[RMDB]
RNA sequence: GGGAACGACUCGAGUAGAGUCGAAAAUAUAUAUAGAUCGUUCUAUUAACGAACACGCGCGGGUCGUCGGUGGUCGGCGAGCCCACGGACGAACUUACUCGCGCGAACGAGUAAAAUUCGCCAGGAAGAAAGAAGGAAGUUUCGACUUCCUUCUUUCAAAAGAAACAACAACAACAAC
Reactivity to DMS in 0.01 (KOAc 150mM, MgCl2 10mM, bicine 150mM(pH8.5), 24C), signal-to-noise 3, nucleotides 027 to 126: u010a090u000a100u010a100u000a100g010a080u000c040g000u000u000c040u000a170u020u010a100a110c090g010a080a090c130a150c040g000c000g010c020g000g000g000u010c000g020u000c020g000g040u000g010g010u000c030g010g010c050g020a040g020c300c000c000a010c000g000g010a010c010g000a090a100c210u020u000a060c000u000c000g010c000g010c050g000a010a030c060g000a080g010u010a060a030a070a130u010u000c000g030c000c010a290g010g010a100a130
Reactivity to 2A3 in 0.01 (KOAc 150mM, MgCl2 10mM, bicine 150mM(pH8.5), 24C), signal-to-noise 1, nucleotides 027 to 126: u070a000u000a010u000a000u040a090g050a080u070c040g030u020u000c040u030a190u170u250a080a030c050g000a060a000c020a020c120g000c010g000c010g020g000g020u020c000g000u000c040g180g060u040g020g000u050c070g000g000c020g000a020g040c020c000c000a010c000g100g000a000c000g000a070a000c010u100u110a010c010u040c000g000c000g060c000g000a000a000c000g000a000g020u110a020a040a100a100u090u010c010g000c000c010a070g070g140a100a140